[RMDB]
RNA sequence: GGGAACGACUCGAGUAGAGUCGAAAAGCCGUCCGGUUUGGCACCGGCUUUCCAGGCCAUAUUAAUCCCGUCGCCGUCUUUACCGACGUUGCCAACCAUAAUGGUGUCGGGGAAGGCGGCAUAUUUUUAUAUGAUGGCAAUUCGUUGCCAUCAUAUAAAAAGAAACAACAACAACAAC
Reactivity to DMS in 0.01 (KOAc 150mM, MgCl2 10mM, bicine 150mM(pH8.5), 24C), signal-to-noise 1, nucleotides 027 to 126: g040c010c000g010u010c000c000g000g020u000u000u020g010g020c020a030c020c000g000g030c250u000u090u000c080c160a060g000g020c040c040a120u040a080u010u040a140a190u000c000c010c010g000u010c120g020c000c010g030u000c000u030u010u000a080c000c030g030a070c000g070u060u010g000c000c010a000a000c060c110a230u030a180a130u010g000g020u030g000u000c000g010g000g000g010a000a000g010g000c000g000g030c030a000u030a000u040u000u000u010
Reactivity to 2A3 in 0.01 (KOAc 150mM, MgCl2 10mM, bicine 150mM(pH8.5), 24C), signal-to-noise 4, nucleotides 027 to 126: g030c020c010g040u070c020c010g030g050u040u080u100g120g000c030a000c000c000g000g000c030u100u090u020c060c030a040g030g000c000c000a050u090a080u210u170a080a120u060c000c010c030g050u100c070g000c010c010g020u000c010u000u020u050a070c000c020g000a020c020g210u280u100g010c010c010a030a020c030c020a130u110a290a140u220g020g020u220g000u110c010g000g000g000g010a000a000g000g000c000g010g000c000a000u010a000u000u000u000u000